RNA sequence: GGGAACGACUCGAGUAGAGUCGAAAAGCUACCCUACCCAUCAAGACGCCGCGGGAUACGAGUGUAUGUUUUGUAGGACACUUGCAGGUAAGUAAUACGCUGUUCGACAUGGAUAUGCGUUGACACGGGAUCUUUUCUAAUUCGUUAGAAAAGAUCCAAAAGAAACAACAACAACAAC
Reactivity to DMS in 0.01 (KOAc 150mM, MgCl2 10mM, bicine 150mM(pH8.5), 24C), signal-to-noise 7, nucleotides 027 to 126: g000c100u020a080c030c010c030u010a130c030c010c030a050u030c090a070a080g010a090c090g010c030c030g010c010g000g010g010a060u020a090c080g010a060g010u010g010u000a050u000g000u010u010u010u010g020u010a070g010g000a090c040a060c030u010u020g020c120a050g010g010u020a040a130g010u020a050a090u010a010c030g010c000u000g000u000u000c010g010a150c200a100u060g010g010a020u010a010u040g020c020g020u000u000g000a140c220a060c120g010
Reactivity to 2A3 in 0.01 (KOAc 150mM, MgCl2 10mM, bicine 150mM(pH8.5), 24C), signal-to-noise 9, nucleotides 027 to 126: g040c040u110a200c000c000c000u030a050c000c020c010a050u080c040a070a040g080a040c040g020c030c000g030c030g000g030g030a040u050a090c040g030a040g060u070g020u040a080u090g120u040u120u100u070g120u110a090g050g070a010c010a000c020u010u050g010c040a030g050g060u110a110a030g010u030a070a040u050a090c020g010c030u010g040u020u050c060g130a230c200a300u250g030g000a020u050a040u200g000c000g000u010u050g050a050c050a030c140g030
Notes: This 177-nucleotide RNA was probed chemically with DMS and 2A3. For 2A3, 11,362 sequencing reads were counted. High DMS reactivity at an A or C suggests that its Watson-Crick edge is free. The DMS profile rests on 18,301 reads. It was measured as part of the RMDB library OK1LIB.